[RMDB]
RNA sequence: GGGAACGACUCGAGUAGAGUCGAAAAGUCAUUCCGGGAACUGCUAAUCCCCAUUCCGCGAAACGGGUUUGCGUAGAAGGAUAGUGUUUCAGAAUGAGAGCAAGGCGUGCCUGCCAUCUGAUUUCCCAGAAAUGCCUCCCCGCGAGCGCAUGGCGACCGCUACAUUAGAUUUCGAUCUAAUGUAGCGAAAAGAAACAACAACAACAAC
Reactivity to 2A3 in 0.01 (KOAc 150mM, MgCl2 10mM, bicine 150mM(pH8.5), 24C), signal-to-noise 9, nucleotides 027 to 156: g060u020c010a010u050u020c050c040g090g000g000a040a020c050u160g010c030u080a180a160u060c020c030c000c010a080u120u020c040c020g050c040g060a090a090a090c150g090g040g040u050u070u090g010c030g010u050a050g040a150a020g010g010a000u020a010g050u050g020u020u030u010c010a020g010a030a020u030g020a070g010a020g100c070a120a060g030g000c050g020u080g030c010c020u040g000c010c000a040u030c040u040g050a140u040u020u000c000c000c000a010g080a010a110a010u040g010c000c010u020c020c010c000c010g050c110g020a010g000c100g000c030a020u050g030g020c020g030a040c010
Reactivity to DMS in 0.01 (KOAc 150mM, MgCl2 10mM, bicine 150mM(pH8.5), 24C), signal-to-noise 4, nucleotides 027 to 156: g010u000c020a070u000u000c010c020g020g030g010a050a040c040u010g040c030u010a100a180u000c010c000c020c030a210u000u000c050c030g000c020g010a050a080a130c070g020g010g030u000u010u000g010c030g020u000a090g050a100a190g010g010a230u000a050g010u000g010u000u000u000c020a070g000a070a070u000g010a090g000a110g030c060a050a060g010g010c040g000u000g010c030c020u010g020c020c010a080u000c030u000g010a180u000u000u000c030c010c000a170g010a040a090a080u010g010c020c000u000c020c010c030c050g010c060g010a090g020c050g020c020a040u010g000g020c000g010a130c100
Structure probing data (2A3 and DMS) for a 207-nucleotide construct. For 2A3 the reverse transcriptase was SuperScript II with manganese. Conditions: 150 mM KOAc, 10 mM MgCl2 and 150 mM bicine (pH 8.5), 24 C. The data come from the RNA Mapping Database (RMDB), library OK3TST. Reactivities are given for positions 27 through 156. The 2A3 profile rests on 11,146 reads.